[RMDB]
Overview: The data come from the RNA Mapping Database (RMDB), library M2PK50. An RNA of 177 nucleotides, treated with 2A3 and DMS and read out base by base. DMS adducts were read by reverse transcription with MarathonRT. 2A3 adducts were read by reverse transcription with SuperScript II with manganese. The reactions ran in a buffer of 150 mM KOAc, 10 mM MgCl2 and 150 mM bicine (pH 8.5), at 24 C. Values are in units of 0.01, from 0 to 300, in steps of 10.

RNA sequence: GGGAACGACUCGAGUAGAGUCGAAAAGGGCGCUAGUUCGCUAGCGCCCAAACAUCACUACACUCUUCAGUAGUGAUAAUAAAUAAUCUGAAGAGUACAUAAAAAGACUCUCGUUCGCGAGAGUCAAGUUUAUAUGAUUGUUCGCAAUCAUAUAAACAAAAGAAACAACAACAACAAC
Reactivity to 2A3 in 0.01 (KOAc 150mM, MgCl2 10mM, bicine 150mM(pH8.5), 24C), signal-to-noise 3, nucleotides 027 to 126: g000g000g020c000g030c010u010a000g010u060u040c110g020c060u000a010g020c000g020c010c000c010a000a000a000c000a000u000c000a000c000u030a000c090a020c020u000c000u010u030c000a010g010u020a000g010u010g030a000u030a020a020u030a000a010a010u160a010a020u060c050u020g010a010a000g010a020g030u110a050c040a080u300a070a100a020a000a010g000a000c000u000c000u000c010g010u020u030c300g000c010g070a000g000a000g000u000c000a000a000
Reactivity to DMS in 0.01 (KOAc 150mM, MgCl2 10mM, bicine 150mM(pH8.5), 24C), signal-to-noise 3, nucleotides 027 to 126: g010g010g020c000g040c000u000a000g040u000u010c250g020c000u000a000g010c000g020c000c010c000a000a020a050c080a050u000c000a010c000u000a000c030a140c000u000c000u000u000c000a020g020u010a010g000u010g010a000u000a050a090u000a020a010a020u000a030a030u010c150u000g000a010a000g010a010g020u030a140c180a120u000a040a070a070a130a120g000a010c000u000c000u000c010g010u000u010c210g020c010g010a010g000a000g020u000c010a010a020